[RMDB]
RNA sequence: GGGAACGACUCGAGUAGAGUCGAAAAUGAUCCCCACAUGCAGGAUUGCUGGGAUCCAGAGGCAGGACAAGAGAUGGUAAGGUGAUUUCCAAUGUCACUCUUUCUGAUUGGUCAGCUUUAAAUAGACACAUCUUGAUAAGUUCGCUUAUCAAGAUGUAAAAGAAACAACAACAACAAC
Reactivity to DMS in 0.01 (KOAc 150mM, MgCl2 10mM, bicine 150mM(pH8.5), 24C), signal-to-noise 9, nucleotides 027 to 126: u010g010a090u000c020c010c010c210a100c130a060u000g010c060a090g000g010a090u000u000g020c040u010g010g000g000a060u000c030c150a100g010a070g010g010c030a060g000g000a040c060a050a060g010a100g010a110u000g010g010u010a040a060g010g010u000g010a040u000u000u010c160c170a090a080u010g000u000c020a030c030u000c020u000u000u000c020u000g000a150u000u000g010g000u000c030a060g000c050u000u000u000a040a080a120u010a110g010a130c180
Reactivity to 2A3 in 0.01 (KOAc 150mM, MgCl2 10mM, bicine 150mM(pH8.5), 24C), signal-to-noise 6, nucleotides 027 to 126: u100g010a040u040c010c000c050c010a060c010a040u150g020c020a020g040g210a160u080u130g020c030u060g020g010g030a030u000c010c010a040g030a020g080g000c030a020g000g050a010c020a040a040g020a000g010a100u090g040g050u080a040a040g000g010u030g030a080u080u060u050c050c040a060a070u130g010u010c010a010c040u130c000u010u040u010c030u020g080a130u060u020g040g020u030c010a000g000c000u060u080u080a110a190a120u120a050g090a010c000